[RMDB]
RNA sequence: GGGAACGACUCGAGUAGAGUCGAAAAGCCAAGUGGAGGGCGGUGCUGCAGAUUGAUGCUGCAAUGGGAAAGCCCUCCAACCUGUCCAUCCAGGAGACCGCUCACACCCUCGCUCGCUAUGCUGCCAAUCCUCGCUGCAUUUCGAUGCAGCGAGGAUAAAAGAAACAACAACAACAAC
Reactivity to DMS in 0.01 (KOAc 150mM, MgCl2 10mM, bicine 150mM(pH8.5), 24C), signal-to-noise 1, nucleotides 027 to 126: g060c020c030a160a140g020u000g000g030a030g000g000g050c000g000g000u040g010c110u000g010c000a010g000a060u000u030g000a140u010g050c000u000g010c040a030a120u000g020g010g000a220a140a290g000c000c000c000u000c010c010a010a120c060c030u010g010u000c020c010a080u000c120c010a090g050g000a140g010a070c070c030g010c030u020c030a050c120a090c040c010c030u000c070g010c010u010c070g030c060u000a050u000g010c050u010g000c010c050a100

Description: Conditions: 150 mM KOAc, 10 mM MgCl2 and 150 mM bicine (pH 8.5), 24 C. An RNA of 177 nucleotides, treated with DMS and read out base by base. Source: RMDB library OK2TST, as collected in RNAgym.